[RMDB]
RNA sequence: GGGAACGACUCGAGUAGAGUCGAAAAGCUAAUGAUGUCGAAGUCCAAUCAUCUGGCAUGAUUAAGCCAAAUGCUCUUCUUUGUGCUACUUGCCCCUUUGCUAAGGGUGAUAGCUGUUCUUCUAAUUAAACUUAAGGGAGUUCGCUCCCUUAAGUUUAAAAGAAACAACAACAACAAC
Reactivity to DMS in 0.01 (KOAc 150mM, MgCl2 10mM, bicine 150mM(pH8.5), 24C), signal-to-noise 1, nucleotides 027 to 126: g020c040u000a020a000u000g000a070u000g020u020c040g000a070a070g040u020c110c170a110a120u000c060a100u000c030u000g000g020c020a060u000g010a080u000u000a070a090g030c000c020a030a080a070u000g000c020u000c030u000u000c030u000u000u000g020u000g000c020u000a020c200u000u010g030c040c000c000c010u000u010u030g030c240u020a140a140g000g020g050u000g010a030u000a030g020c000u000g000u000u000c040u030u020c080u000a080a140u000u010
Description: Structure probing data (DMS) for a 177-nucleotide construct. The reactions ran in a buffer of 150 mM KOAc, 10 mM MgCl2 and 150 mM bicine (pH 8.5), at 24 C. Source: RMDB library 15KREP, as collected in RNAgym. The DMS profile rests on 1,029 reads.